RNA sequence: GGGAACGACUCGAGUAGAGUCGAAAACGGAAACCAUCCUCUCUUCCAUCCGAAACGUACGUUAACUCUUAGGUUCCACCAUUAUAGUUCAGUGUGCAUGCGAAAGGAUGGCAACAGGCAUGCGAAAGGAUGGCUGUUCCCAUCCGAAACGUACGCGUAACCUCUCACAAUUCGUUGUGAGAGGUUAAAAAGAAACAACAACAACAAC
Reactivity to DMS in 0.01 (KOAc 150mM, MgCl2 10mM, bicine 150mM(pH8.5), 24C), signal-to-noise 3, nucleotides 027 to 156: c030g020g000a090a100a080c020c010a090u000c020c010u000c040u000c030u020u000c020c070a090u000c010c010g010a100a110a060c040g020u010a020c040g010u000u000a070a060c030u000c080u000u000a090g030g010u010u000c060c030a100c050c020a160u010u000a120u000a090g000u010u000c040a120g040u000g000u010g020c040a040u000g010c040g010a070a120a240g010g020a020u010g000g020c050a040a010c010a040g020g010c010a020u010g000c020g010a120a100a250g010g010a020u000g010g000c020u000g010u020u000c130c000c000a030u000c010c010g000a030a020a040c030g010u000a010c040g010c010g010
Reactivity to 2A3 in 0.01 (KOAc 150mM, MgCl2 10mM, bicine 150mM(pH8.5), 24C), signal-to-noise 5, nucleotides 027 to 156: c100g040g030a100a030a000c080c020a110u050c030c020u070c000u030c040u100u060c010c020a070u060c060c040g090a100a040a040c020g000u040a010c010g020u030u100a100a080c050u040c050u160u130a090g080g010u110u070c030c030a050c020c010a090u140u080a130u210a170g170u100u170c090a060g020u040g060u050g110c020a040u070g030c010g090a080a020a020g000g000a000u010g000g020c000a000a000c000a000g060g030c010a010u100g110c040g100a120a030a010g100g030a000u020g110g000c010u010g000u000u000c020c000c000a000u000c000c000g020a050a060a030c010g010u040a000c010g000c010g040

Structure probing data (DMS and 2A3) for a 207-nucleotide construct. For DMS the reverse transcriptase was MarathonRT. The reactions ran in a buffer of 150 mM KOAc, 10 mM MgCl2 and 150 mM bicine (pH 8.5), at 24 C. 2A3 adducts were read by reverse transcription with SuperScript II with manganese. For DMS, 7,909 sequencing reads were counted.